[RMDB]
RNA sequence: GGGAACGACUCGAGUAGAGUCGAAAAGAUAUGGAGUGGUAAUCAGCAACAGCGAGUCCUUCGGAAACGAAGGCUCGACAUGCUGUACCACUCCUAAGUCAAACCACCAGACUUCGGUCUGGUGGAACCAACCAGUACACUUCGGUGUACUGGUUGGAAAAGAAACAACAACAACAAC
Reactivity to DMS in 0.01 (KOAc 150mM, MgCl2 10mM, bicine 150mM(pH8.5), 24C), signal-to-noise 1, nucleotides 027 to 126: g000a000u000a030u030g000g000a000g020u000g000g020u020a020a080u100c030a020g000c010a130a080c300a100g000c020g040a010g030u010c030c000u000u000c000g010g000a020a040a010c000g000a000a000g000g000c000u000c010g000a030c090a300u020g000c000u000g030u030a030c000c000a000c000u000c010c000u000a010a040g010u000c000a180a080a220c000c000a010c000c010a020g000a020c000u000u010c300g050g000u030c000u000g010g020u000g000g000a020a070

The record gives the reactivity of an RNA of 177 nucleotides to DMS. For DMS, 1,127 sequencing reads were counted. It was measured as part of the RMDB library TTRDES.